[RMDB]
RNA sequence: GGGAACGACUCGAGUAGAGUCGAAAAUGACGUCGUUUCGACGACGUCAACAUAAAAUCAGCGGUAAAUAAUUAGGUGGCGUUACCGCUGAACGCCUCCAUACGAGAGGGCUAUUCGUAGCCCUCAACUAGUCACAAGUAUUCGUACUUGUGACUAGAAAAGAAACAACAACAACAAC
Reactivity to DMS in 0.01 (KOAc 150mM, MgCl2 10mM, bicine 150mM(pH8.5), 24C), signal-to-noise 7, nucleotides 027 to 126: u000g000a010c000g010u000c000g010u000u000u010c180g010a030c010g010a010c000g020u000c000a020a040c190a070u010a060a060a120a100u010c010a000g010c000g010g010u010a030a050a030u000a060a080u000u010a110g010g020u000g000g000c060g000u000u000a050c030c000g000c000u000g000a010a020c050g010c020c010u000c040c060a130u010a090c230g010a160g010a010g000g010g010c000u000a010u000u010c200g010u000a020g010c000c000c000u000c000a010a070
Reactivity to 2A3 in 0.01 (KOAc 150mM, MgCl2 10mM, bicine 150mM(pH8.5), 24C), signal-to-noise 9, nucleotides 027 to 126: u060g000a000c000g010u010c010g020u010u050u120c220g080a020c000g010a000c000g000u000c000a000a010c010a020u210a030a120a010a090u030c010a000g020c000g110g170u150a050a080a070u140a070a160u190u190a120g070g010u030g030g000c020g000u000u010a110c000c000g000c000u000g000a000a000c010g010c010c000u010c020c030a070u090a180c090g020a050g000a000g220g000g000c000u010a010u020u060c150g060u030a000g000c000c000c000u000c000a000a000
Record summary
An RNA of 177 nucleotides, treated with DMS and 2A3 and read out base by base. The data come from the RNA Mapping Database (RMDB), library M2PK50. For 2A3 the reverse transcriptase was SuperScript II with manganese. The reactions ran in a buffer of 150 mM KOAc, 10 mM MgCl2 and 150 mM bicine (pH 8.5), at 24 C.